[RMDB]
RNA sequence: GGGAACGACUCGAGUAGAGUCGAAAAUGCAUUUAUGCGUUUAUUAAUGUGUGAGUUUACGCGUUGUUUCAAUGGACUUCUUUGUUGCUCUUGUAUGGUUAUGGAUAUAGGAUCAUUGUCGCCAAUGCUUUGAUCGUUUGAAGAACGUGAUAAGUUGACCAGAAAUACUGUUCGCAGUAUUUCUGGUAAAAGAAACAACAACAACAAC
Reactivity to 2A3 in 0.01 (KOAc 150mM, MgCl2 10mM, bicine 150mM(pH8.5), 24C), signal-to-noise 7, nucleotides 027 to 156: u080g000c020a010u040u120u200a090u190g040c020g030u030u100u070a130u080u120a150a120u080g060u010g020u030g070a080g060u090u130u120a070c090g020c030g020u010u010g000u000u020u030c050a050a050u080g040g030a090c030u030u020c010u060u130u090g060u060u040g030c010u000c000u010u030g030u050a030u080g030g040u100u070a040u130g060g010a020u030a010u020a130g040g010a010u030c020a040u030u060g040u050c030g020c050c020a060a050u100g000c000u000u000u010g010a010u020c000g030u010u040u080g130a110a060g060a040a000c020g010u010g010a020u010a050a020g020u040u070g040
Reactivity to DMS in 0.01 (KOAc 150mM, MgCl2 10mM, bicine 150mM(pH8.5), 24C), signal-to-noise 2, nucleotides 027 to 156: u000g010c040a060u010u010u000a030u020g010c060g020u000u000u000a090u020u000a070a080u000g010u000g010u000g000a080g040u000u000u010a070c080g040c080g000u000u000g000u000u000u010c070a100a140u000g020g030a070c030u000u000c000u010u000u010g020u000u000g010c020u000c050u030u000g010u000a060u010g020g000u000u000a080u000g000g010a070u000a130u010a100g020g020a090u000c030a100u010u000g020u000c020g010c020c080a040a070u010g000c030u000u000u010g010a190u000c010g040u010u010u010g020a100a190g010a080a010c030g000u010g010a240u010a010a050g020u010u000g010
An RNA of 207 nucleotides, treated with 2A3 and DMS and read out base by base. DMS adducts were read by reverse transcription with MarathonRT. For 2A3, 6,095 sequencing reads were counted.